[RMDB]
RNA sequence: GGGAACGACUCGAGUAGAGUCGAAAAGCUGGCGAAUGGAAGAAAAGCUUGAUAUAAAGAGUGUCAUGAUGUCCUCACUAUUCCUUUCAGGCAUAACCCCAGGACACUCACUGUGUUGCCCAGGUUGGAGUGCAAUGGUGAGGUCUUAGGCUCACCAUGAGCAUGAGUAUUUCGAUACUCAUGCUCAAAAAGAAACAACAACAACAAC
Reactivity to DMS in 0.01 (KOAc 150mM, MgCl2 10mM, bicine 150mM(pH8.5), 24C), signal-to-noise 2, nucleotides 027 to 156: g020c000u000g000g020c080g010a080a050u000g010g030a180a080g010a030a090a080a130g030c020u010u000g010a120u020a090u010a050a090a210g000a090g070u000g010u000c030a090u000g020a130u010g010u000c030c000u000c010a020c080u020a120u000u000c010c020u000u000u010c090a130g030g030c030a170u010a030a100c030c010c030c040a130g020g010a060c030a040c030u020c060a070c120u010g030u030g000u000u000g010c020c040c030a110g000g030u010u010g040g000a170g030u010g010c060a070a040u000g000g010u000g010a000g030g010u010c090u020u000a130g020g030c020u000c000a030c000c010a220
Reactivity to 2A3 in 0.01 (KOAc 150mM, MgCl2 10mM, bicine 150mM(pH8.5), 24C), signal-to-noise 2, nucleotides 027 to 156: g030c020u030g020g010c040g040a100a050u050g020g020a080a060g060a110a130a020a010g030c040u050u060g090a040u110a000u050a160a110a050g050a000g000u060g010u040c040a090u070g100a090u130g120u190c000c030u070c000a040c020u050a130u110u080c020c040u030u110u050c060a000g060g000c020a030u060a150a150c020c000c010c030a030g000g040a010c000a000c060u040c010a020c030u040g000u010g050u180u060g030c000c000c010a050g070g050u090u110g050g000a070g010u080g000c050a000a080u040g000g010u010g000a010g000g020u050c010u030u070a050g010g010c000u000c000a010c000c000a010

Source: RMDB library OK3TST, as collected in RNAgym. Structure probing data (DMS and 2A3) for a 207-nucleotide construct. For DMS the reverse transcriptase was MarathonRT. For 2A3, 1,358 sequencing reads were counted. The reactions ran in a buffer of 150 mM KOAc, 10 mM MgCl2 and 150 mM bicine (pH 8.5), at 24 C. 2A3 adducts were read by reverse transcription with SuperScript II with manganese.